[RMDB]
RNA sequence: GGGAACGACUCGAGUAGAGUCGAAAAGAUAUGGAGUGGUCACUUCUUGGACCUACACCAUCGGAAACGAUGGGUAGCUAGAAGGACCACUCCUAAGUCAAAACGCGCAGAGUUCGCUCUGCGCGAAGCUUAAUCAAGCCUUCGGGCUUGAUUAAGCAAAAGAAACAACAACAACAAC
Reactivity to DMS in 0.01 (KOAc 150mM, MgCl2 10mM, bicine 150mM(pH8.5), 24C), signal-to-noise 1, nucleotides 027 to 126: g000a000u000a130u010g000g000a000g030u000g000g010u000c020a130c010u000u000c000u000u030g010g000a080c300c000u000a010c000a090c010c000a020u000c000g040g010a010a030a030c010g000a010u000g000g000g000u000a000g000c040u000a000g010a010a000g010g000a020c000c000a000c010u000c000c000u000a000a080g000u030c000a120a100a100a270c010g030c000g000c010a000g000a040g020u000u000c260g010c010u000c000u000g020c010g030c000g020a000a000
Reactivity to 2A3 in 0.01 (KOAc 150mM, MgCl2 10mM, bicine 150mM(pH8.5), 24C), signal-to-noise 1, nucleotides 027 to 126: g040a020u060a000u100g020g010a020g040u000g000g000u000c060a110c300u000u070c030u110u300g160g070a170c030c000u000a010c180a300c000c000a000u000c000g040g030a040a040a070c000g010a010u000g050g000g000u000a000g010c040u090a030g000a010a020g030g010a000c010c000a000c020u000c000c000u000a000a000g030u000c000a000a000a090a150c040g010c010g000c030a010g030a030g060u070u040c200g040c120u000c010u000g080c010g000c010g000a000a000
Description:
Chemical mapping of a 177-nucleotide RNA with DMS and 2A3. For DMS the reverse transcriptase was MarathonRT. The RNA was probed in 150 mM KOAc, 10 mM MgCl2 and 150 mM bicine (pH 8.5) at 24 C. The DMS profile rests on 987 reads. It was measured as part of the RMDB library TTRDES.